The record gives the reactivity of an RNA of 177 nucleotides to 2A3. 2A3 is a SHAPE reagent: it acylates the 2'-hydroxyl of flexible nucleotides of all four kinds. The data come from the RNA Mapping Database (RMDB), library OK1LIB.
RNA sequence: GGGAACGACUCGAGUAGAGUCGAAAACAUCCGGUACAGCUUCGGCUGGACGCCAGCGCCAUUGACGGCAUUAACGCCAGCGUCGCGUGCGUCAAUGAUAUCGUUGCCGAAGGGCGUACCGCCUACGGAGCAGUCGCUAGUUCGCUAGCGACUGCUCAAAAGAAACAACAACAACAAC
Reactivity to 2A3 in 0.01 (KOAc 150mM, MgCl2 10mM, bicine 150mM(pH8.5), 24C), signal-to-noise 2, nucleotides 027 to 126: c080a140u050c040c070g070g000u000a010c000a080g110c050u020u030c030g040g000c000u120g070g000a000c040g000c010c000a000g000c000g000c000c000a140u000u140g060a140c090g100g010c020a070u150u240a040a150c080g000c000c020a060g090c020g140u080c010g010c010g130u260g000c040g000u000c000a000a060u090g010a060u110a090u130c110g110u200u170g010c020c020g030a020a010g000g000g000c060g010u050a010c000c000g000c000c000u110a120c090g040